An RNA of 177 nucleotides, treated with 2A3 and DMS and read out base by base. The RNA was probed in 150 mM KOAc, 10 mM MgCl2 and 150 mM bicine (pH 8.5) at 24 C. Reactivities are given for positions 27 through 126. The data come from the RNA Mapping Database (RMDB), libraries RFM100 and RFMREP. 2A3 adducts were read by reverse transcription with SuperScript II with manganese.
RNA sequence: GGGAACGACUCGAGUAGAGUCGAAAAACGCUAUGCUACGGCAUAGCGAACCCGAUGAUGAUGGUUAAAAGCGCUUAUCGGUGACGAGCCUCUACCUGCUGAGGAGUAGCCGUUACGACGGCUACAACCGUUAUCCUAGGUUCGCCUAGGAUAACGGAAAAGAAACAACAACAACAAC
Reactivity to 2A3 in 0.01 (KOAc 150mM, MgCl2 10mM, bicine 150mM(pH8.5), 24C), signal-to-noise 7, nucleotides 027 to 126: a000c020g000c000u000a000u010g000c000u020a050c290g090g010c010a000u000a000g000c000g000a010a010c010c000c020g010a040u080g000a010u010g010a030u080g030g090u110u130a070a050a050a050g070c050g000c040u070u050a050u100c030g030g040u080g050a060c060g030a010g040c010c000u000c010u030a090c030c030u060g060c060u070g050a060g040g030a090g020u000a000g000c010c000g010u010u030a100c240g020a000c000g020g000c000u010a010c000a000a020
Reactivity to DMS in 0.01 (KOAc 150mM, MgCl2 10mM, bicine 150mM(pH8.5), 24C), signal-to-noise 3, nucleotides 027 to 126: a130c020g010c000u000a000u000g010c010u000a090c200g040g020c010a010u000a000g010c000g000a000a040c020c000c020g000a130u010g010a040u010g000a050u010g000g010u000u000a040a080a120a120g010c080g000c020u000u000a040u000c040g010g010u010g000a110c100g000a110g010c040c010u000c020u000a060c040c050u000g000c130u000g010a070g000g000a170g000u000a010g000c040c000g010u000u020a100c160g030a020c000g000g010c000u000a000c000a050a110